[RMDB]
RNA sequence: GGGAACGACUCGAGUAGAGUCGAAAAGAUAUGGAAUCCCGGAAGAUGGAACCGACAACAGCUCGGAAACGAGACAUGUCGCUAACAUCCCGGGAUUCCUAAGUCAAAAGCAUAGUUCGCUAUGCAACGAGAUAACAUUGUUCGCAAUGUUAUCUCGAAAAGAAACAACAACAACAAC
Reactivity to 2A3 in 0.01 (KOAc 150mM, MgCl2 10mM, bicine 150mM(pH8.5), 24C), signal-to-noise 3, nucleotides 027 to 126: g000a010u080a030u140g000g000a010a000u010c010c010c020g010g030a300a270g000a020u020g000g000a000a030c020c000g020a000c010a120a040c010a090g030c010u000c000g010g010a070a030a020c010g000a010g010a000c060a120u080g000u000c000g010c010u130a240a010c010a000u000c010c000c000g020g000g000a000u000u000c000c000u000a000a000g000u000c010a020a010a080a090g000c000a000u020a010g030u070u100c260g060c120u010a000u000g000c020a010a030
Reactivity to DMS in 0.01 (KOAc 150mM, MgCl2 10mM, bicine 150mM(pH8.5), 24C), signal-to-noise 6, nucleotides 027 to 126: g000a030u000a300u010g000g000a010a020u010c000c010c000g000g000a140a080g030a010u000g000g010a120a220c300c000g010a020c000a020a080c280a130g000c010u000c000g010g000a050a080a200c010g000a010g000a040c090a140u000g000u000c010g000c020u010a070a170c010a000u000c000c000c000g000g020g010a000u000u000c000c000u000a000a030g010u000c030a090a100a090a080g000c010a010u000a000g000u000u010c220g020c010u000a000u000g010c010a070a120
This 177-nucleotide RNA was probed chemically with 2A3 and DMS.
The reactions ran in a buffer of 150 mM KOAc, 10 mM MgCl2 and 150 mM bicine (pH 8.5), at 24 C.
Reactivities are given for positions 27 through 126.
2A3 adducts were read by reverse transcription with SuperScript II with manganese.